[RMDB]
RNA sequence: GGGAACGACUCGAGUAGAGUCGAAAAAGAGCCUGCCUCAAAACAACAACAACAACAAAAACAAACACAAAAAUUUUUUUGAGUUGCCUUCCAAAUUGAUGAAAAUGGUAAACUGUGGCCAUUAGAAUCCUUGACCGCUUCGACUCCAAACUUUGGACAUAGUCACUGCUUUCGAGCAGUGACUAUGAAAAGAAACAACAACAACAAC
Reactivity to 2A3 in 0.01 (KOAc 150mM, MgCl2 10mM, bicine 150mM(pH8.5), 24C), signal-to-noise 2, nucleotides 027 to 156: a010g030a000g020c020c010u030g000c000c000u120c050a040a070a000a070c030a000a020c000a010a000c000a010a010c010a040a010c020a060a120a060a060a020c070a070a110a060c140a000c090a120a130a080a120a130u140u120u060u000u000u060u070g030a010g010u060u040g050c010c000u040u000c000c010a050a070a110u130u110g030a040u030g010a010a110a060a060u030g010g030u060a080a090a120c080u070g060u110g130g030c000c000a010u000u000a030g060a070a010u020c000c040u040u040g040a040c020c010g090c090u070u060c040g070a020c030u040c090c000a110a150a220c060u130u080u110g030g010a010